RNA sequence: GGGAACGACUCGAGUAGAGUCGAAAAGCUUGGCCAUAGGCCAUCAGCGCAUGCGUGGAACCUUUGUGGCUCCUCUGCCGAUCCAUACUGCGGAACUCCUAGCCGCUUGUUUUGCUCGCAGCCGGUCGCGAUUAAAUUCGUUCGCGAAUUUAAUCGCAAAAGAAACAACAACAACAAC
Reactivity to DMS in 0.01 (KOAc 150mM, MgCl2 10mM, bicine 150mM(pH8.5), 24C), signal-to-noise 1, nucleotides 027 to 126: g000c060u010u060g010g030c000c000a190u060a100g000g000c010c010a020u000c100a050g030c060g010c040a150u000g000c140g000u000g000g000a080a070c140c050u020u000u000g020u060g000g010c020u000c080c000u010c030u000g010c020c070g000a040u000c090c060a020u010a120c100u000g000c020g000g000a100a080c100u000c000c030u010a070g040c010c030g000c060u000u000g000u000u000u020u000g010c050u000c020g000c030a040g010c000c000g000g010u000c060
Reactivity to 2A3 in 0.01 (KOAc 150mM, MgCl2 10mM, bicine 150mM(pH8.5), 24C), signal-to-noise 4, nucleotides 027 to 126: g000c040u050u100g010g000c030c030a250u100a170g030g020c040c000a030u130c060a040g030c030g000c070a050u150g020c020g050u040g030g050a060a130c010c010u040u130u200g170u070g010g000c000u020c000c000u070c040u070g000c020c030g020a020u000c010c010a050u060a130c000u060g060c020g010g020a070a040c020u020c040c020u010a020g040c000c010g000c000u020u030g070u010u060u040u090g010c010u000c030g040c030a040g020c000c010g040g030u040c050